[RMDB]
RNA sequence: GGGAACGACUCGAGUAGAGUCGAAAAUCGGCAUCGACGAGGUGAUCGCCGACAUCCUGCCGGAAGGCAAGGUCGAUGUCAUCGAGCAGCUACGCGACCGCGGACAUGUCGUCGCCAUGGUCGGUGACCCUUACGCAACGUUCGCGUUGCGUAAGGGAAAAGAAACAACAACAACAAC
Reactivity to 2A3 in 0.01 (KOAc 150mM, MgCl2 10mM, bicine 150mM(pH8.5), 24C), signal-to-noise 4, nucleotides 027 to 126: u050c000g020g000c000a010u010c020g050a080c020g100a110g050g100u090g020a070u060c060g010c050c020g010a010c000a050u050c010c000u010g000c020c000g120g120a150a080g040g000c070a050a040g100g020u090c040g040a040u060g020u020c020a060u080c030g020a020g080c030a000g010c060u140a070c090g030c010g060a040c000c030g010c020g040g010a050c060a100u200g030u100c040g010u000c020g010c040c020a110u150g090g010u040c000g010g010u020g020a050
Reactivity to DMS in 0.01 (KOAc 150mM, MgCl2 10mM, bicine 150mM(pH8.5), 24C), signal-to-noise 3, nucleotides 027 to 126: u000c040g000g010c010a040u000c020g020a030c050g000a120g020g020u000g010a050u010c090g010c070c050g000a040c070a060u000c020c030u000g010c000c000g010g030a180a080g010g020c000a030a070g010g020u000c050g020a040u000g010u000c030a080u000c030g000a130g000c040a060g020c110u000a080c210g000c030g000a040c070c100g010c040g000g010a110c150a070u000g010u010c150g010u000c020g010c050c100a060u000g010g000u000c030g010g000u010g000a090

The record gives the reactivity of an RNA of 177 nucleotides to 2A3 and DMS. The 2A3 profile rests on 5,834 reads. The RNA was probed in 150 mM KOAc, 10 mM MgCl2 and 150 mM bicine (pH 8.5) at 24 C.